An RNA of 177 nucleotides, treated with 2A3 and read out base by base. The data come from the RNA Mapping Database (RMDB), library OK2TST. Values cover nucleotides 27 to 126. Conditions: 150 mM KOAc, 10 mM MgCl2 and 150 mM bicine (pH 8.5), 24 C. 2A3 adducts were read by reverse transcription with SuperScript II with manganese.
RNA sequence: GGGAACGACUCGAGUAGAGUCGAAAAGACGAUGGCAGAGUCGAACCGCUGCACGAGCGUAACCAGUCCGGCGUAUUCGCUGCGACAGGCACCGUGAACGGUUUACGCACCAUAGCGUUCUGCACCACGGAGUCAUGCGUUUCGACGCAUGACUCCGAAAAGAAACAACAACAACAAC
Reactivity to 2A3 in 0.01 (KOAc 150mM, MgCl2 10mM, bicine 150mM(pH8.5), 24C), signal-to-noise 1, nucleotides 027 to 126: g050a000c020g030a070u090g050g000c070a070g010a030g160u130c050g040a000a020c000c000g000c140u100g080c000a010c040g050a140g080c090g060u130a030a070c010c000a050g000u060c000c030g000g020c010g060u050a270u190u300c040g000c010u010g050c050g000a000c030a000g000g020c070a070c070c070g000u020g040a030a010c000g010g000u050u150u080a080c050g030c010a020c070c020a050u080a070g110c000g080u100u070c000u020g000c030a060c030c010a010